RNA sequence: GGGAACGACUCGAGUAGAGUCGAAAAUGUGAUUCUGCCGUCUUCAGUUCAACAUAUACUUGUAAGGUAACCUACGUUUGUAAAACUAAGCCUUGCUUAGGGUAUCUCGUUUAUGAGUGACAGAUAGCUCGGCGUGGUGAUUCGUCACCACGCCGAGAAAAGAAACAACAACAACAAC
Reactivity to 2A3 in 0.01 (KOAc 150mM, MgCl2 10mM, bicine 150mM(pH8.5), 24C), signal-to-noise 1, nucleotides 027 to 126: u240g000u110g000a000u050u050c030u000g110c060c000g030u030c050u040u050c240a050g030u120u060c140a150a040c000a000u000a000u000a060c120u200u150g000u060a060a060g000g030u000a140a000c030c030u030a050c050g110u000u090u200g110u060a000a050a000a000c000u000a000a000g080c000c000u000u020g030c000u000u150a050g010g040g040u030a060u000c180u120c020g150u140u090u000a230u050g090a180g000u000g000a000c020a000g120a240u050a150g030